[RMDB]
RNA sequence: GGGAACGACUCGAGUAGAGUCGAAAAGCGACUGACCCUGGAGCACAUGCAAGUGAGUAUGCAGACAUGAGUAACGUUAAGCCGGGUGAAAUCCCCGGCCGCCGUAAACCCGAGGUUUCCAGGGCAAUGACGUAAUUAGCUUCGGCUAAUUACGUCAAAAAGAAACAACAACAACAAC
Reactivity to DMS in 0.01 (KOAc 150mM, MgCl2 10mM, bicine 150mM(pH8.5), 24C), signal-to-noise 3, nucleotides 027 to 126: g000c090g000a120c110u010g010a140c000c000c000u000g030g020a050g000c100a140c070a070u010g010c160a090a130g000u040g030a090g050u010a080u010g000c040a070g000a120c170a040u010g000a070g020u030a140a080c120g020u010u020a110a100g010c010c000g000g000g000u000g000a050a040a180u030c090c010c010c000g000g000c030c010g000c300c010g010u020a030a020a170c030c030c000g000a070g000g030u010u000u010c000c020a010g000g000g010c150a050a080
Reactivity to 2A3 in 0.01 (KOAc 150mM, MgCl2 10mM, bicine 150mM(pH8.5), 24C), signal-to-noise 3, nucleotides 027 to 126: g020c030g100a050c040u050g120a140c020c020c000u000g030g000a010g000c020a020c020a080u060g050c030a130a060g070u200g140a060g050u130a050u190g010c020a000g090a100c000a120u110g010a030g040u010a040a000c020g000u050u070a050a000g000c010c000g010g000g020u000g000a040a030a030u060c010c000c000c000g000g000c000c000g000c000c000g040u060a060a080a050c000c000c000g000a030g030g030u040u200u000c010c000a000g000g010g000c000a000a040